[RMDB]
RNA sequence: GGGAACGACUCGAGUAGAGUCGAAAAUGUGCCUUUGGCCGGCCUGCCCGUCCCAAGUUGGUAGUGGCUGGCGGAGGCUUUAGCGGAAGCUUUGGUCUCUCCAGACCUGAAGUGGCAGGAAUGGCGUGAGGCUGGCUUCACAGAGCAGCGAUCACUCCUUAUAUGAGGUCUUCGGACCUCAUAUAAGAAAAGAAACAACAACAACAAC
Reactivity to DMS in 0.01 (KOAc 150mM, MgCl2 10mM, bicine 150mM(pH8.5), 24C), signal-to-noise 1, nucleotides 027 to 156: u000g010u000g020c030c020u000u010u010g050g070c040c030g040g000c000c000u000g040c030c000c050g010u000c050c040c050a100a240g020u000u010g010g020u080a120g020u000g010g030c020u000g010g010c110g060g020a040g030g010c000u000u010u000a020g040c000g080g020a170a260g020c030u000u000u010g030g020u000c000u030c010u030c030c000a060g010a180c000c000u000g010a090a110g030u010g040g010c010a100g010g020a060a160u010g050g010c110g030u020g000a040g030g020c020u010g000g010c020u000u020c010a170c110a130g010a120g040c010a110g040c040g010a150u000c010a090c010u000c020
Reactivity to 2A3 in 0.01 (KOAc 150mM, MgCl2 10mM, bicine 150mM(pH8.5), 24C), signal-to-noise 3, nucleotides 027 to 156: u120g020u060g030c010c000u070u030u060g200g000c010c020g000g070c000c010u020g000c000c000c000g110u100c020c010c020a130a090g080u180u190g070g040u070a130g060u080g090g010c010u020g000g000c090g010g000a000g000g000c050u050u050u030a000g000c030g030g110a060a000g000c000u110u040u070g030g000u000c000u000c010u000c000c000a200g010a300c020c000u010g050a120a060g080u150g100g040c010a010g020g030a020a110u110g020g010c090g000u060g020a000g000g010c020u010g070g000c020u050u050c060a040c000a090g050a010g030c030a000g030c030g080a030u110c010a020c080u040c000
Structure probing data (DMS and 2A3) for a 207-nucleotide construct. The 2A3 profile rests on 1,456 reads. For DMS the reverse transcriptase was MarathonRT. It was measured as part of the RMDB library ARCHII.